[RMDB]
RNA sequence: GGGAACGACUCGAGUAGAGUCGAAAACAAGCUGGGUCUCGGGAAAGGAGCGUGUGUAUCUCAUGCGUUUUUUGCACUGAGAUGGGCGGUAGCCUAGGCGAGUAGGCAGCUUGGGCUGCUACUAGGCUCUAGGGAUCGGCUUCGGUCGAUCUCUAGAAAAAGAAACAACAACAACAAC
Reactivity to DMS in 0.01 (KOAc 150mM, MgCl2 10mM, bicine 150mM(pH8.5), 24C), signal-to-noise 9, nucleotides 027 to 126: c080a090a090g010c020u000g000g010g010u000c020u000c040g000g010g000a100a060a040g000g000a040g000c020g020u010g020u010g010u020a110u030c170u010c010a030u000g000c000g010u000u010u010u010u020u010g010c220a160c120u000g000a010g000a010u010g010g000g010c020g020g000u020a050g010c000c000u000a020g000g010c080g010a110g010u020a070g010g010c020a040g000c000u010u040g010g010g000c000u000g000c000u000a050c010u000a030g000g010c030
Reactivity to 2A3 in 0.01 (KOAc 150mM, MgCl2 10mM, bicine 150mM(pH8.5), 24C), signal-to-noise 9, nucleotides 027 to 126: c040a030a030g030c020u100g070g060g100u020c010u010c000g020g010g020a050a050a020g020g010a020g010c020g010u030g000u010g020u080a140u100c120u030c060a000u020g010c010g030u000u000u010u030u110u110g170c240a070c070u010g000a000g000a020u020g020g060g010c040g020g030u050a010g000c000c000u010a010g020g010c050g030a040g090u110a080g100g050c050a010g000c020u120u150g120g140g000c000u000g010c000u020a040c010u020a020g050g000c000
This 177-nucleotide RNA was probed chemically with DMS and 2A3. Reactivities are rounded to 0.1 and cut off at 0 and 3. The reactions ran in a buffer of 150 mM KOAc, 10 mM MgCl2 and 150 mM bicine (pH 8.5), at 24 C. The 2A3 profile rests on 69,837 reads.